The record gives the reactivity of an RNA of 177 nucleotides to DMS and 2A3. Conditions: 150 mM KOAc, 10 mM MgCl2 and 150 mM bicine (pH 8.5), 24 C. For DMS, 11,711 sequencing reads were counted. For DMS the reverse transcriptase was MarathonRT. Source: RMDB library OK1LIB, as collected in RNAgym.
[RMDB]
RNA sequence: GGGAACGACUCGAGUAGAGUCGAAAAGAAGACCGCUGGCGAAGGCGGGUCCAUGCGAAACACGUGACGAACAGGAACGAAAGCGGGCGUAGCAAACAGCAUUAGAUACGCUAGUGGUCCACGCCGAAAAUUAUAAGAAAUUCGUUUCUUAUAAUUUAAAAGAAACAACAACAACAAC
Reactivity to DMS in 0.01 (KOAc 150mM, MgCl2 10mM, bicine 150mM(pH8.5), 24C), signal-to-noise 6, nucleotides 027 to 126: g010a180a140g020a030c000c000g020c020u000g010g010c010g010a090a110g010g000c000g000g000g000u010c020c150a090u010g020c020g010a130a150a070c070a060c030g010u000g000a260c060g000a100a090c130a170g010g010a120a100c020g000a040a090a220g010c020g000g000g000c000g000u000a140g000c020a030a070a040c090a070g010c030a070u020u030a100g000a170u020a120c030g010c000u000a000g010u000g000g010u000c000c060a060c060g000c000c000g000a060
Reactivity to 2A3 in 0.01 (KOAc 150mM, MgCl2 10mM, bicine 150mM(pH8.5), 24C), signal-to-noise 2, nucleotides 027 to 126: g060a030a000g010a000c000c000g000c000u000g020g020c040g010a040a010g100g000c000g050g030g000u000c020c000a040u050g000c000g060a060a010a010c020a000c000g050u040g040a040c030g000a040a060c000a060g070g040a050a030c020g020a080a000a000g000c010g000g000g000c010g020u030a000g000c000a000a120a000c010a000g020c010a020u000u130a060g010a020u080a080c040g000c000u010a000g010u000g010g000u000c000c020a020c040g030c010c000g030a050